[RMDB]
RNA sequence: GGGAACGACUCGAGUAGAGUCGAAAAGUAUGGAUGCCACCGUGACGGCUCAAUCACACAAGUGCCAACGAUAACGAGGCGCUCGCUAUUGCUGCGUAACUAACGGCCUGACGGUCUGACGUUACAAAAAACGAAAAGUGGUUCGCCACUUUUCGAACGAACUGAACAGGUUCGCCUGUUCAGUUCGAAAAGAAACAACAACAACAAC
Reactivity to 2A3 in 0.01 (KOAc 150mM, MgCl2 10mM, bicine 150mM(pH8.5), 24C), signal-to-noise 3, nucleotides 027 to 156: g090u100a060u150g040g040a080u090g020c020c010a070c020c050g070u100g050a040c070g010g010c010u010c060a060a110u090c010a030c010a010c000a140a070g020u030g030c000c010a130a070c070g080a130u110a240a040c060g030a070g050g000c030g000c020u060c020g000c030u080a050u090u210g070c040u050g010c030g010u010a010a020c020u000a070a000c060g010g000c000c010u060g130a060c100g000g000u000c000u000g010a000c030g010u010u030a030c030a010a090a000a000a000a000c010g000a000a010a000a010g000u000g020g030u040u100c120g060c030c000a000c000u000u000u000u000c000g000a040a010
Reactivity to DMS in 0.01 (KOAc 150mM, MgCl2 10mM, bicine 150mM(pH8.5), 24C), signal-to-noise 1, nucleotides 027 to 156: g070u000a090u000g030g000a100u000g010c000c050a070c100c070g050u010g030a190c140g050g000c020u000c080a090a180u000c040a150c050a060c110a070a050g040u000g000c020c000a090a170c080g030a130u000a140a070c020g020a160g010g010c040g000c020u020c000g040c010u000a020u010u010g000c000u020g010c060g020u000a060a060c000u000a260a240c160g000g010c000c000u000g000a070c240g100g040u000c020u000g010a300c180g020u000u000a020c010a010a010a010a140a050a050c010g060a010a000a020a030g020u000g030g000u020u030c300g000c020c000a000c000u000u000u000u000c000g020a040a140

Source: RMDB library M2RFPK, as collected in RNAgym. Chemical mapping of a 207-nucleotide RNA with 2A3 and DMS. For 2A3, 2,053 sequencing reads were counted. For DMS, 1,499 sequencing reads were counted. Reactivities are given for positions 27 through 156.